[RMDB]
RNA sequence: GGGAACGACUCGAGUAGAGUCGAAAAAGCAUCCAGUUCUGGGACUCUGUCUCCUUUUCAAACGUAUUCAUGUAGAACAGGCAUGACGAGAAUGCCUUGUCAACAUGGGUGAUGGGGAAUCAAUCAGACAGGGCGCCGGGCUCAAGGCUGCAGUCACGCGGUGUAUAUCCUUCGGGAUAUACACCGCAAAAGAAACAACAACAACAAC
Reactivity to 2A3 in 0.01 (KOAc 150mM, MgCl2 10mM, bicine 150mM(pH8.5), 24C), signal-to-noise 2, nucleotides 027 to 156: a000g050c000a030u010c020c020a000g000u300u210c010u030g030g010g070a060c040u030c020u060g030u050c020u000c060c010u140u180u030u020c100a180a210a100c100g190u160a140u050u020c020a010u040g050u050a060g060a110a040c010a000g040g000c000a010u050g070a170c110g070a170g140a190a080u010g000c000c000u000u110g010u000c010a000a050c000a030u000g000g000g020u030g070a120u170g010g020g010g000a000a110u090c110a020a090u140c070a110g030a010c000a000g020g010g000c070g030c010c000g000g010g030c010u030c030a000a000g000g020c010u020g010c080a020g080u140c080a020c100